An RNA of 207 nucleotides, treated with 2A3 and read out base by base.
Conditions: 150 mM KOAc, 10 mM MgCl2 and 150 mM bicine (pH 8.5), 24 C.
It was measured as part of the RMDB library OK3TST.
[RMDB]
RNA sequence: GGGAACGACUCGAGUAGAGUCGAAAAAAUCUGGAAGAAGCCUGGGUUCCUGACGACCUUUAGGUCCAAACCACUAUUCCAGCUUCAGACCUCUUUCUUAAGAUGUUUUCAUGAGAGAGAAACAAACUUCUCUCUCAUAUAAGCAGCUAAUUUUAGACGCCUCAUUAAUAUUCGUAUUAAUGAGGCGAAAAGAAACAACAACAACAAC
Reactivity to 2A3 in 0.01 (KOAc 150mM, MgCl2 10mM, bicine 150mM(pH8.5), 24C), signal-to-noise 1, nucleotides 027 to 156: a000a010u050c030u050g000g000a040a050g050a140a000g040c000c080u060g010g060g000u110u040c040c030u110g040a080c120g010a010c020c010u080u160u210a090g000g010u010c000c000a000a030a110c030c000a010c040u070a140u020u000c000c020a030g030c000u080u020c020a050g050a230c020c010u000c060u080u210u060c110u150u160a060a000g000a020u020g000u000u020u030u060c140a000u000g000a000g010a000g010a010g020a010a010a020c160a050a050a020c070u060u010c000u030c010u000c010u000c000a000u000a000u000a000a000g000c010a000g050c020u240a070a260u300u050u140u180a090g000a030